[RMDB]
RNA sequence: GGGAACGACUCGAGUAGAGUCGAAAAGACUACGUAGAAGGCUGUAUCUGACUUCGAGAGCUGUAUGGCUGACAGAACACUGUCAGCUUGAUACUUGGCAAGUCAGGAAUACUUGGCACGUAGAGAAGAUAAUGUGUAAUUUCGAUUGUACAUUAUCAAAAGAAACAACAACAACAAC
Reactivity to 2A3 in 0.01 (KOAc 150mM, MgCl2 10mM, bicine 150mM(pH8.5), 24C), signal-to-noise 9, nucleotides 027 to 126: g020a030c000u000a000c010g030u040a040g070a280a030g180g030c050u040g010u020a030u010c000u000g000a000c000u000u010c010g070a070g010a010g050c090u070g040u110a040u060g020g000c000u000g000a000c000a010g040a150a080c300a100c210u000g000u000c000a000g000c000u000u010g000a000u010a010c000u030u040g030g010c110a000a000g000u000c000a000g000g070a080a010u020a030c030u090u120g060g000c030a000c000g000u000a000g010a010g030a120a010
Reactivity to DMS in 0.01 (KOAc 150mM, MgCl2 10mM, bicine 150mM(pH8.5), 24C), signal-to-noise 9, nucleotides 027 to 126: g010a190c000u000a000c000g010u000a070g010a150a060g010g010c130u010g010u010a050u020c010u000g000a020c000u000u000c020g010a170g000a020g010c180u010g010u030a070u010g000g000c000u000g000a010c000a010g010a220a150c300a130c020u000g000u000c000a000g000c000u000u000g000a120u030a050c010u000u010g000g010c170a020a010g000u000c000a000g000g010a080a050u010a040c010u010u000g000g020c160a040c000g000u000a010g000a140g010a140a110